[RMDB]
RNA sequence: GGGAACGACUCGAGUAGAGUCGAAAAAGUUAGUAUGGCUCGUUACGACGAGCCAUACUCACAACGGUUUUCCUAAAUCGUCGUGAGACGGACCUUGGAAAACCUAGUAUUUAAAUAACUAGGUCAAAUUAGCCUAGAUCCUUCGGGAUCUAGGCAACACAUUCUCUGGGUUCGCCCAGAGAAUGUGAAAAGAAACAACAACAACAAC
Reactivity to 2A3 in 0.01 (KOAc 150mM, MgCl2 10mM, bicine 150mM(pH8.5), 24C), signal-to-noise 2, nucleotides 027 to 156: a000g010u010u010a000g000u000a000u000g000g000c000u010c000g000u010u090a090c230g010a000c000g000a060g010c000c000a010u000a010c000u000c010a000c000a030a050c030g020g010u010u000u000u000c000c010u000a000a010a020u060c000g000u000c000g000u010g190a090g000a020c000g000g010a000c000c000u000u020g000g000a000a000a010a000c000c000u000a010g010u000a010u030u110u110a080a140a120u120a080a000c050u050a000g010g000u020c010a010a060a200u160u110a060g000c000c000u000a000g000a000u010c010c000u020u120c250g060g000g000a000u000c000u000a000g000g020c000a000a000